[RMDB]
The record gives the reactivity of an RNA of 177 nucleotides to 2A3.

RNA sequence: GGGAACGACUCGAGUAGAGUCGAAAAGAACGUACCCCGAGGUGGGGGAUAGCGGUGGGAAACUGCCGGUAAUACCUCAUGAUCUCUCCGGAGCAAAGCCUCGGCGCCUCGGGAUCGGCGAUCUUCCAGUGGCAAGGUGUUUCGACACCUUGCCACUAAAAGAAACAACAACAACAAC
Reactivity to 2A3 in 0.01 (KOAc 150mM, MgCl2 10mM, bicine 150mM(pH8.5), 24C), signal-to-noise 1, nucleotides 027 to 126: g060a050a030c000g020u050a000c000c000c000c000g000a000g000g000u050g000g000g000g020g000a000u000a000g130c000g010g010u000g010g000g000a090a030a030c000u000g030c000c010g000g000u040a070a060u130a050c000c000u010c030a030u110g100a120u060c050u020c000u030c090c170g150g030a000g000c100a150a060a000g000c000c040u020c120g060g000c000g000c000c000u020c000g010g040g000a000u020c010g020g020c040g000a070u020c000u050u030c000c010